[RMDB]
RNA sequence: GGGAACGACUCGAGUAGAGUCGAAAAGCCGGAGUCGUCAGACGCGAGCUCCUCCAGGCCGUGAAUCCAUGCCCACAUGCGAGGGGGGACGGGCUCGCCGGGGGUGGCGUCGGUGAAUAGCGUGGGGCCACCCCUCUCCCUUCGGGGAGAGGGGUGGAAAAGAAACAACAACAACAAC
Reactivity to 2A3 in 0.01 (KOAc 150mM, MgCl2 10mM, bicine 150mM(pH8.5), 24C), signal-to-noise 3, nucleotides 027 to 126: g030c000c000g000g040a040g020u020c020g010u040c060a020g040a090c040g030c010g020a030g030c030u030c020c000u000c000c000a030g070g070c050c050g080u100g100a030a050u070c030c020a050u160g060c000c000c010a160c040a080u130g020c060g080a130g040g030g010g000g000g010a010c090g040g020g000c020u020c020g000c040c000g030g000g000g000g050u050g010g010c060g100u040c010g010g010u020g020a080a080u110a100g030c010g010u010g020g020g000g000
Reactivity to DMS in 0.01 (KOAc 150mM, MgCl2 10mM, bicine 150mM(pH8.5), 24C), signal-to-noise 2, nucleotides 027 to 126: g010c040c000g000g030a020g000u000c020g000u020c140a100g020a200c270g040c020g000a050g030c040u040c010c000u020c010c040a030g000g030c080c100g010u030g000a130a110u020c030c020a140u050g000c090c080c040a110c140a060u080g010c100g010a090g030g000g010g000g000g020a150c240g000g020g000c000u030c020g030c000c070g000g000g000g020g040u000g000g000c090g000u020c010g000g030u000g010a140a030u010a060g000c050g010u020g000g010g000g000
About this RNA: Chemical mapping of a 177-nucleotide RNA with 2A3 and DMS. The DMS profile rests on 2,296 reads. Conditions: 150 mM KOAc, 10 mM MgCl2 and 150 mM bicine (pH 8.5), 24 C.